[RMDB]
An RNA of 177 nucleotides, treated with DMS and 2A3 and read out base by base.
Reactivities are given for positions 27 through 126.
RNA sequence: GGGAACGACUCGAGUAGAGUCGAAAAUCAAGCCAGGCACAUUUGAUGGUUGCAUCAGCAUUUCUGCUGUGCAGUGGCUCUGUAAUGCUAACAAGAAGUCUGAAAACCCUGCCAAGCGCCUGUACUAGUGGUAUGGUAUGUUCGCAUACCAUACCACAAAAGAAACAACAACAACAAC
Reactivity to DMS in 0.01 (KOAc 150mM, MgCl2 10mM, bicine 150mM(pH8.5), 24C), signal-to-noise 2, nucleotides 027 to 126: u010c110a090a070g030c120c010a010g000g010c060a040c040a140u010u020u020g010a080u000g000g000u000u000g030c050a030u000c020a030g050c050a030u010u020u010c170u000g010c030u000g020u000g000c010a110g010u000g010g000c020u000c090u000g010u010a110a090u010g010c110u000a140a060c050a100a090g020a090a080g010u000c060u000g000a060a070a120a070c050c040c050u010g010c070c050a060a090g020c070g030c050c000u000g020u000a100c110u000a160
Reactivity to 2A3 in 0.01 (KOAc 150mM, MgCl2 10mM, bicine 150mM(pH8.5), 24C), signal-to-noise 1, nucleotides 027 to 126: u070c010a000a040g010c040c030a070g040g000c020a020c020a180u100u050u150g090a090u060g030g030u130u110g050c050a090u100c070a140g030c010a040u100u020u240c150u130g000c000u020g020u010g000c020a020g020u020g090g010c010u020c000u040g040u010a030a090u230g060c040u040a050a020c020a040a020g130a130a030g040u010c030u030g050a060a120a100a130c000c000c000u000g080c040c030a060a020g020c050g000c030c000u080g050u110a090c000u020a040
Conditions: 150 mM KOAc, 10 mM MgCl2 and 150 mM bicine (pH 8.5), 24 C. Reactivities are rounded to 0.1 and cut off at 0 and 3.